[RMDB]
RNA sequence: GGGAACGACUCGAGUAGAGUCGAAAACUGUUUAUCAAAAGCACAGGACUAUGCAAAAUCGAAAGAUGAAGUAUAUGGUCUGACACCUGCCCGGUGCUGGAAGGUUAAAAGGAGUAGUUAUCUUCGGUCAUCUGGUGUACUUCGGUACACCAGAUGAAAAAGAAACAACAACAACAAC
Reactivity to DMS in 0.01 (KOAc 150mM, MgCl2 10mM, bicine 150mM(pH8.5), 24C), signal-to-noise 2, nucleotides 027 to 126: c060u010g030u010u010u000a070u070c090a020a140a140a050g020c040a040c010a110g000g000a110c050u000a060u000g000c000a030a070a170a040u000c000g000a220a200a110g030a000u000g000a100a270g000u010a000u000a030u020g040g000u000c040u000g000a160c120a050c050c020u000g010c050c010c070g030g000u000g010c040u000g000g020a070a040g030g010u000u000a050a040a020a100g000g040a160g000u000a050g000u010u020a080u010c010u000u070c070g010g010
Description
Source: RMDB libraries RFM100 and RFMREP, as collected in RNAgym. Structure probing data (DMS) for a 177-nucleotide construct.